[RMDB]
RNA sequence: GGGAACGACUCGAGUAGAGUCGAAAACGGGUGUCGAGUGCAUGGGCAUAAGCCCGCCUAACUGUGAGACCAACAAGUCGAGCAGAUGCGAAAGCAGGCCCAAGUGAUCCGGCGGUAGAAAGUGGAAUUGCGAUGUUUAGUUCGCUAAACAUCGCAAAAAAGAAACAACAACAACAAC
Reactivity to DMS in 0.01 (KOAc 150mM, MgCl2 10mM, bicine 150mM(pH8.5), 24C), signal-to-noise 2, nucleotides 027 to 126: c000g000g000g010u000g000u000c020g020a140g000u000g070c010a180u030g000g030g020c020a050u040a070a110g040c000c070c020g020c020c080u020a100a150c000u000g010u040g000a300g000a030c000c030a150a080c300a050a120g000u010c000g070a250g000c010a000g000a140u010g010c000g000a020a050a170g040c000a060g010g010c020c000c010a100a120g020u000g010a050u060c030c000g060g000c000g020g040u000a060g000a050a050a120g020u040g000g000a060a150
Reactivity to 2A3 in 0.01 (KOAc 150mM, MgCl2 10mM, bicine 150mM(pH8.5), 24C), signal-to-noise 1, nucleotides 027 to 126: c060g030g050g000u280g010u070c050g010a070g020u140g000c060a030u050g000g030g020c000a050u060a290a040g010c000c000c000g000c000c000u040a060a040c000u060g000u000g050a010g000a000c030c000a010a180c140a300a000g000u000c000g000a010g020c000a000g000a030u140g000c000g000a140a000a000g050c010a000g000g020c000c000c000a030a000g010u020g010a010u000c000c000g000g000c090g000g000u100a030g220a210a060a020g050u210g000g150a080a020
This 177-nucleotide RNA was probed chemically with DMS and 2A3. For DMS the reverse transcriptase was MarathonRT. It was measured as part of the RMDB libraries RFM100 and RFMREP.